Record summary
Source: RMDB library TTRDES, as collected in RNAgym. An RNA of 177 nucleotides, treated with DMS and 2A3 and read out base by base. For DMS the reverse transcriptase was MarathonRT.

RNA sequence: GGGAACGACUCGAGUAGAGUCGAAAAAAAGAUAUGGAGGAUACCGAGCGUACUGUACCGAUGAAACGAGAUCGGAAACGAUCUCGUGGAGGUACGUACGCGUUUGACGUAUCCUCCUAAGUCAAAAGUGGAUAAAAUGGUUCGCCAUUUUAUCCACAAAAGAAACAACAACAACAAC
Reactivity to DMS in 0.01 (KOAc 150mM, MgCl2 10mM, bicine 150mM(pH8.5), 24C), signal-to-noise 2, nucleotides 027 to 126: a080a120a150g000a020u010a300u000g000g020a050g000g000a030u000a000c000c000g000a100g010c000g020u010a010c000u020g090u000a020c040c010g000a130u000g000a120a140a010c000g000a010g000a000u000c000g020g000a070a070a090c010g000a000u000c000u010c000g000u010g000g000a030g000g000u000a000c010g010u000a000c010g020c010g000u000u000u030g010a160c300g000u000a010u000c010c000u000c020c000u000a010a030g000u010c020a080a050a140a140
Reactivity to 2A3 in 0.01 (KOAc 150mM, MgCl2 10mM, bicine 150mM(pH8.5), 24C), signal-to-noise 1, nucleotides 027 to 126: a000a010a020g040a050u070a020u120g010g000a000g010g000a000u010a010c010c060g010a060g020c000g000u010a040c080u300g010u000a000c020c010g290a300u070g000a010a010a010c020g000a000g010a000u010c000g010g000a020a050a020c000g000a000u000c010u000c000g000u000g020g000a000g000g000u000a000c000g000u000a020c000g000c000g030u050u010u040g020a000c050g000u000a000u000c000c000u010c010c010u000a010a000g000u000c000a000a040a080a180